[RMDB]
RNA sequence: GGGAACGACUCGAGUAGAGUCGAAAAUCGUGUGUUCGCACACGAAAAAAAACCUUUGUGCCACCCUCUGCCGAGGAUCUACAUUGCCCAUUGGGCAAUCGUAGGGAGGCAACGUGAGGGUGGCACUCUGGUAAAAACGCAUGCUUCGGCAUGCGAAGCUAUGUUGCAACUUCGGUUGCAACAUAGCAAAAGAAACAACAACAACAAC
Reactivity to 2A3 in 0.01 (KOAc 150mM, MgCl2 10mM, bicine 150mM(pH8.5), 24C), signal-to-noise 2, nucleotides 027 to 156: u020c000g000u000g000u000g010u020u040c200g150c050a000c010a030c050g040a090a000a000a000a020a000a000a000c030c010u040u010u000g000u000g000c000c000a000c000c000c000u040c040u060g000c010c000g050a210g030g020a010u010c000u010a010c010a020u000u000g000c010c000c070a260u210u300g000g000g010c020a000a000u040c140g000u000a000g000g000g010a010g010g000c000a040a060c110g180u260g010a000g000g020g020u000g000g000c000a010c000u000c000u010g000g000u040a010a040a030a020a000c000g000c000a000u010g020c010u130u080c300g070g000c020a030u070g000c010g000a120a010